[RMDB]
RNA sequence: GGGAACGACUCGAGUAGAGUCGAAAAUGUUGGCCAGGUUGGUCUCAAACUCCUGACCUCAUGAUCCACCUGCCUCGGCCUUCCAAAGUGCUAGGAUUGCAGGCAUGAGCCACUGCGCCUGGGCAACUCGCCUCAUUAUGUUCGCAUAAUGAGGCGAAAAAGAAACAACAACAACAAC
Reactivity to 2A3 in 0.01 (KOAc 150mM, MgCl2 10mM, bicine 150mM(pH8.5), 24C), signal-to-noise 1, nucleotides 027 to 126: u070g010u000u010g030g100c000c000a010g060g000u040u060g030g040u030c080u040c120a170a150a060c060u070c020c010u030g010a040c000c000u020c000a000u030g050a040u070c040c020a050c010c030u010g020c000c050u020c070g000g000c000c000u030u040c070c030a150a070a010g100u150g110c000u050a030g060g000a090u030u230g030c020a010g000g010c000a030u040g010a010g030c040c050a160c070u110g030c010g000c010c000u020g030g000g030c000a000a030c000
Reactivity to DMS in 0.01 (KOAc 150mM, MgCl2 10mM, bicine 150mM(pH8.5), 24C), signal-to-noise 2, nucleotides 027 to 126: u010g000u010u000g000g010c000c010a040g000g000u010u000g010g010u000c050u010c060a070a130a120c100u000c030c010u000g000a050c050c000u000c040a010u020g000a240u010c060c060a110c030c020u000g020c030c070u020c110g000g010c020c030u000u000c110c060a090a070a040g020u010g010c010u000a080g010g010a090u000u000g040c010a000g000g010c040a020u000g000a070g010c000c130a110c140u000g020c040g020c020c010u000g000g000g000c040a050a070c120